RNA sequence: GGGAACGACUCGAGUAGAGUCGAAAAUAAGCAAAAGACAACCACCUUUCCCGCUGGCAAUAGCGUUAUCCCUCUGCACUUCGGUAAUAUGAGGGCACAGUAAAUCCCGCAAGGAUGAGAAUGUGAUUAAACAGUUACAGCUUCGGCUGUAACUGAACCGUUUUAUGUACUUCGGUACAUAAAACGGAAAAGAAACAACAACAACAAC
Reactivity to DMS in 0.01 (KOAc 150mM, MgCl2 10mM, bicine 150mM(pH8.5), 24C), signal-to-noise 1, nucleotides 027 to 156: u000a050a160g010c040a090a060a120a170g000a130c020a240a070c000c000a060c060c030u000u000u000c000c000c000g000c140u000g000g000c100a050a180u000a070g060c060g000u000u010a130u000c010c000c020u000c010u000g010c070a050c030u000u000c160g000g010u010a080a120u010a110u010g010a010g020g000g000c060a060c030a110g000u000a110a110a060u000c020c000c000g000c180a140a130g000g010a060u000g030a090g010a090a120u000g000u000g000a100u020u000a060a120a180c000a030g000u000u000a000c000a010g000c010u000u020c280g060g000c020u010g030u000a010a000c000u010g000a020a090
Reactivity to 2A3 in 0.01 (KOAc 150mM, MgCl2 10mM, bicine 150mM(pH8.5), 24C), signal-to-noise 3, nucleotides 027 to 156: u160a030a020g060c050a070a050a000a060g140a100c070a070a030c040c010a050c010c020u020u050u020c010c020c000g030c070u070g010g000c060a070a150u060a100g050c040g070u100u080a100u080c000c000c000u020c000u010g040c030a040c010u060u110c140g080g000u060a040a030u120a120u300g000a010g010g010g000c010a000c000a000g010u000a000a030a020u010c010c000c020g080c100a040a030g010g020a020u020g010a030g020a040a030u060g020u020g000a040u070u230a080a110a020c010a000g000u000u000a000c000a010g000c000u050u070c150g150g000c000u000g000u000a000a000c000u000g000a000a000
The data come from the RNA Mapping Database (RMDB), library M2RFPK. This 207-nucleotide RNA was probed chemically with DMS and 2A3. The reactions ran in a buffer of 150 mM KOAc, 10 mM MgCl2 and 150 mM bicine (pH 8.5), at 24 C. Reactivities are rounded to 0.1 and cut off at 0 and 3. For DMS, 3,298 sequencing reads were counted. The 2A3 profile rests on 2,524 reads.